[RMDB]
RNA sequence: GGGAACGACUCGAGUAGAGUCGAAAACGUUUGUAAUGCCCCUGGUUGUGGCGUUUCAGACGUUACUAAGCUAUAUUUAGGUGGUAUGAGCUACUUUUGUGUAGAUCAUAGACCUGUGUGUAGUUUUACAUCACCUCCUUCGGGAGGUGAAAAAGAAACAACAACAACAAC
Reactivity to DMS in 0.01 (KOAc 150mM, MgCl2 10mM, bicine 150mM(pH8.5), 24C), signal-to-noise 2, nucleotides 027 to 129: c000g030u000u000u000g040u010a040a000u050g020c010c010c040c090u050g060g050u060u010g070u050g000g000c030g030u000u000u000c000a010g020a030c050g030u040u000a110c140u050a010a050g000c010u030a040u000a010u000u000u000a010g000g000u010g010g050u000a020u020g010a030g000c010u010a030c000u010u060u080u100g000u020g000u030a000g010a000u000c010a000u000a040g020a020c020c040u010g010u030g020u010g020u010a030g010u000u020u030u050a110c160a080
Reactivity to 2A3 in 0.01 (KOAc 150mM, MgCl2 10mM, bicine 150mM(pH8.5), 24C), signal-to-noise 7, nucleotides 027 to 129: c000g000u010u000u010g010u000a000a000u010g010c000c000c000c050u170g290g000u180u040g080u090g020g000c000g000u000u000u000c010a000g000a000c000g000u010u010a010c010u030a030a000g000c000u010a000u000a010u020u040u060a020g010g000u020g080g140u000a010u010g010a010g050c010u010a000c010u050u180u270u220g300u090g010u040a010g000a030u000c010a000u020a010g020a010c000c000u000g000u000g000u010g000u010a000g000u000u020u000u090a060c040a060
An RNA of 170 nucleotides, treated with DMS and 2A3 and read out base by base. For DMS, 22,110 sequencing reads were counted. For 2A3, 13,064 sequencing reads were counted. DMS adducts were read by reverse transcription with MarathonRT. The reactions ran in a buffer of 150 mM KOAc, 10 mM MgCl2 and 150 mM bicine (pH 8.5), at 24 C. It was measured as part of the RMDB library 15KLIB.